[RMDB]
RNA sequence: GGGAACGACUCGAGUAGAGUCGAAAAAUAGCGAAGGAUGGGUAACUCAGAAGAUAACGGAGACACCAGCCUGAGUCUACUGUGGCAUUCUGCCCCCUAAAUAGAGAUGCAAGGAUAAUGUGAAGAGGGUUCUGAGCACAGGAAGGGAAAUCAGAAAAAUUUAAUAUCGAUUCGUCGAUAUUAAAUUAAAAGAAACAACAACAACAAC
Reactivity to 2A3 in 0.01 (KOAc 150mM, MgCl2 10mM, bicine 150mM(pH8.5), 24C), signal-to-noise 5, nucleotides 027 to 156: a000u070a000g050c020g030a050a020g030g010a040u070g010g020g040u070a080a060c020u010c050a050g030a110a030g030a130u110a190a030c060g060g000a030g030a040c060a050c060c020a000g020c010c010u040g010a010g020u040c020u030a060c030u050g050u070g080g000c030a070u170u020c060u170g020c010c000c000c000c030u040a070a090a050u110a050g040a010g000a010u050g010c030a040a010g010g010a010u040a140a040u200g030u040g040a040a020g010a010g010g010g020u070u030c050u020g020a010g000c010a010c010a030g020g020a010a020g020g010g020a010a090a050u080c040a030g180a080a060a100
Reactivity to DMS in 0.01 (KOAc 150mM, MgCl2 10mM, bicine 150mM(pH8.5), 24C), signal-to-noise 2, nucleotides 027 to 156: a110u010a070g000c060g020a140a050g010g010a050u000g020g000g020u000a030a120c050u000c030a050g040a130a090g020a140u000a070a100c030g020g000a160g010a130c080a050c010c040a030g020c040c020u000g000a300g010u000c030u000a040c080u000g010u030g000g010c050a130u000u010c090u000g000c000c050c000c010c000u000a030a080a170u000a080g000a100g000a080u010g020c030a060a040g020g000a080u000a040a090u020g040u000g010a060a030g020a070g010g000g020u000u030c030u000g010a080g000c040a050c040a010g000g020a100a070g010g000g000a020a040a070u000c030a100g000a070a050a050
Overview
Chemical mapping of a 207-nucleotide RNA with 2A3 and DMS. For DMS, 3,989 sequencing reads were counted. For DMS the reverse transcriptase was MarathonRT. The 2A3 profile rests on 4,179 reads. It was measured as part of the RMDB library OK3TST.